RNA sequence: GGGAACGACUCGAGUAGAGUCGAAAACCUAGCCCUCCGGAGUUCCCUCUCGAGUUCCUCUAACUUCUUUCUUCCAUUCACCCACUGCUCGAGGACCUCUUCUCUUCCUCCGCGAUUCUUCUUCGACUCGGACCGGCUCAUCUCGACAAGAGGCGGCGAUAUGUAACCAGUUCGCUGGUUACAUAUCAAAAGAAACAACAACAACAAC
Reactivity to 2A3 in 0.01 (KOAc 150mM, MgCl2 10mM, bicine 150mM(pH8.5), 24C), signal-to-noise 2, nucleotides 027 to 156: c000c010u010a030g020c010c000c000u000c020c030g040g040a030g020u040u060c020c000c000u010c000u020c020g050a050g020u050u010c020c000u050c030u050a100a120c050u090u050c020u070u150u010c020u060u010c050c030a090u060u120c040a070c020c020c020a070c070u040g020c020u020c030g020a020g000g040a070c010c020u050c010u090u030c050u010c000u060u020c000c010u010c010c010g030c010g040a060u050u030c000u030u030c000u030u030c040g020a030c000u010c010g020g040a050c020c010g060g010c000u000c020a090u070c020u020c040g080a060c040a140a050g000a020g040g040c020g020g000c020
Reactivity to DMS in 0.01 (KOAc 150mM, MgCl2 10mM, bicine 150mM(pH8.5), 24C), signal-to-noise 1, nucleotides 027 to 156: c030c010u000a150g010c070c000c010u000c010c030g000g010a170g010u030u000c000c030c030u000c040u010c030g010a130g010u000u000c040c030u000c030u000a070a070c030u010u000c020u010u010u010c040u010u000c010c030a160u010u000c060a070c020c020c030a160c080u000g020c030u010c030g000a130g020g020a080c040c000u010c000u000u010c040u000c040u000u000c020c020u000c040c060g020c040g000a150u000u000c020u010u000c040u010u000c010g000a050c020u000c010g030g000a150c060c030g020g030c030u000c060a090u000c030u000c050g020a130c080a030a170g010a070g000g020c080g040g080c080